[RMDB]
RNA sequence: GGGAACGACUCGAGUAGAGUCGAAAAGUCAUUUCUUUAUGGACCCCAUUCCCAUAAAUUCAGUAUCCAAAGAUGGUUGCUGUAUCUAUGGGAAUAAGGGUUCCAUAACGAAAUGAUCUUGGACGCAACUAGAUAGGUCGUUCGCGACCUAUCUAGUAAAAGAAACAACAACAACAAC
Reactivity to DMS in 0.01 (KOAc 150mM, MgCl2 10mM, bicine 150mM(pH8.5), 24C), signal-to-noise 2, nucleotides 027 to 126: g000u000c020a010u000u000u000c000u000u000u000a000u000g010g000a010c030c000c010c080a130u000u000c020c000c000a010u000a000a010a030u010u000c000a000g000u000a000u020c000c000a040a240a170g020a150u010g010g010u010u020g000c010u000g000u000a000u000c080u010a020u000g020g000g000a000a020u000a150a180g010g000g000u020u000c000c010a010u000a010a000c070g010a000a000a000u000g000a020u020c030u000u010g000g010a160c080g040c130a140
Reactivity to 2A3 in 0.01 (KOAc 150mM, MgCl2 10mM, bicine 150mM(pH8.5), 24C), signal-to-noise 4, nucleotides 027 to 126: g010u000c000a000u000u000u000c000u000u010u000a000u000g000g000a010c000c000c000c000a020u000u010c020c000c000a000u000a000a020a000u030u010c000a000g020u020a040u020c000c010a120a180a070g270a300u230g030g010u020u020g000c000u010g010u000a000u000c010u000a000u000g000g010g000a000a010u010a000a000g020g000g000u060u030c000c000a010u000a000a000c010g010a000a000a000u000g000a000u040c040u020u040g060g020a020c060g010c160a050
This 177-nucleotide RNA was probed chemically with DMS and 2A3. Values cover nucleotides 27 to 126. The RNA was probed in 150 mM KOAc, 10 mM MgCl2 and 150 mM bicine (pH 8.5) at 24 C.